[RMDB]
Structure probing data (DMS and 2A3) for a 177-nucleotide construct. The data come from the RNA Mapping Database (RMDB), library OK2TRN. The 2A3 profile rests on 1,166 reads. High DMS reactivity at an A or C suggests that its Watson-Crick edge is free. For DMS the reverse transcriptase was MarathonRT.
RNA sequence: GGGAACGACUCGAGUAGAGUCGAAAAACGUUUGGAUGCAUAGAGUGACAUACGUGAGGCACUCUGGAUUGACAGUUUGUGCCUUAGGUAGCACAUGCUUAGUGUUAACCUUCGUUUACUUUUGCAACAGUCCCUCGUAGUUCGCUACGAGGGACUGAAAAGAAACAACAACAACAAC
Reactivity to DMS in 0.01 (KOAc 150mM, MgCl2 10mM, bicine 150mM(pH8.5), 24C), signal-to-noise 1, nucleotides 027 to 126: a060c030g000u000u000u010g000g020a090u020g000c000a050u000a150g000a130g020u000g010a130c130a130u000a020c010g010u000g000a020g000g020c000a010c000u000c000u000g000g000a220u000u010g000a140c040a000g000u020u000u020g000u000g020c000c000u000u000a030g000g020u000a050g000c120a040c100a080u010g000c060u000u000a120g000u000g020u000u020a110a120c010c000u000u000c050g000u000u000u020a060c120u000u000u000u000g000c210a080a220
Reactivity to 2A3 in 0.01 (KOAc 150mM, MgCl2 10mM, bicine 150mM(pH8.5), 24C), signal-to-noise 2, nucleotides 027 to 126: a010c070g030u040u030u080g060g010a120u070g010c010a010u070a110g100a020g070u000g050a120c080a200u080a020c140g250u010g020a020g000g010c010a010c010u030c030u000g070g040a210u160u280g140a070c000a000g000u050u090u000g000u040g010c040c060u020u000a050g050g060u030a000g030c010a050c000a040u210g050c050u080u060a090g010u000g030u090u190a130a160c000c000u040u050c080g050u050u030u020a140c070u010u110u120u160g000c000a090a050